This 207-nucleotide RNA was probed chemically with DMS and 2A3.
The RNA was probed in 150 mM KOAc, 10 mM MgCl2 and 150 mM bicine (pH 8.5) at 24 C.
For DMS the reverse transcriptase was MarathonRT.
The 2A3 profile rests on 3,821 reads.
The DMS profile rests on 3,675 reads.
2A3 adducts were read by reverse transcription with SuperScript II with manganese.
[RMDB]
RNA sequence: GGGAACGACUCGAGUAGAGUCGAAAAACAAAAGAAGCUGUCCAGUAUUGCGAAAAGAGGGGGUGGAACUACGUCUCUCCGAAAUCAGAAGACGAAGAGACAGAAGAUUCGGAAGAGGAAGAGGAUUCUGAAGAAGAAGAAGGAGAUUCGGAAGAAGCACCGAUGUAUUAUUCGUAAUACAUCGGUGAAAAGAAACAACAACAACAAC
Reactivity to DMS in 0.01 (KOAc 150mM, MgCl2 10mM, bicine 150mM(pH8.5), 24C), signal-to-noise 2, nucleotides 027 to 156: a130c040a060a110a110a150g010a130a130g010c000u000g010u000c030c020a200g030u010a080u030u060g030c050g000a070a050a090a090g000a090g010g030g010g040g030u000g020g010a030a050c050u000a120c060g020u000c000u000c020u000c010c010g010a030a040a130u000c050a160g010a160a180g020a210c020g000a040a050g000a070g020a050c030a070g010a090a090g010a090u010u000c060g000g020a090a060g010a070g020g020a010a060g040a060g000g000a120u000u000c060u000g010a080a080g000a090a050g010a030a060g000a060a100g010g010a090g000a120u000u010c050g020g000a080a030g010a060a140g010
Reactivity to 2A3 in 0.01 (KOAc 150mM, MgCl2 10mM, bicine 150mM(pH8.5), 24C), signal-to-noise 4, nucleotides 027 to 156: a000c040a010a070a020a030g090a060a020g020c040u050g040u050c020c000a030g050u070a120u110u170g060c040g070a030a080a030a030g080a080g010g020g000g020g000u050g030g000a040a040c030u070a040c060g010u000c010u000c000u000c020c010g080a110a100a060u150c040a060g120a230a020g040a050c030g020a050a010g020a010g010a030c020a010g050a080a010g000a030u080u090c030g010g000a030a010g010a030g050g000a000a030g020a010g010g010a020u070u000c010u110g030a020a010g010a030a010g010a020a000g000a010a010g030g020a010g010a040u080u090c030g020g000a010a040g030a030a010g070